[RMDB]
RNA sequence: GGGAACGACUCGAGUAGAGUCGAAAAAUGAACGUGGUGGGCGUAAGUUAGUAGAAGAUCUAAUGGUACGCGGUGGGUUUUCGACUGUACUCGAAAGCACCACCACCACCAAGUCGUUCCCACCGAACAAGGUGUGAUAAUUCGUUAUCACACCUUGAAAAGAAACAACAACAACAAC
Reactivity to DMS in 0.01 (KOAc 150mM, MgCl2 10mM, bicine 150mM(pH8.5), 24C), signal-to-noise 5, nucleotides 027 to 126: a050u010g010a060a070c070g020u010g010g010u000g010g010g000c010g020u000a100a250g010u000u000a020g010u000a090g010a140a150g000a090u010c010u010a020a020u000g010g010u000a010c030g010c030g040g020u010g000g010g010u000u000u000u000c010g010a030c110u000g000u000a090c130u000c010g010a010a030a060g010c040a110c000c010a040c020c050a110c030c030a020c020c030a060a070g010u000c010g010u000u000c000c000c000a070c120c130g000a090a120
Reactivity to 2A3 in 0.01 (KOAc 150mM, MgCl2 10mM, bicine 150mM(pH8.5), 24C), signal-to-noise 7, nucleotides 027 to 126: a000u170g020a040a010c030g040u040g010g000u010g020g030g010c000g000u010a030a030g000u020u020a010g000u020a030g060a300a020g030a070u050c000u000a010a010u050g240g030u050a000c000g000c020g010g000u030g010g030g000u000u000u010u010c010g010a010c040u160g080u220a070c030u010c010g010a010a010a000g010c020a080c050c000a010c000c000a000c000c000a000c010c010a020a000g010u010c000g000u010u000c010c010c000a000c020c040g060a080a040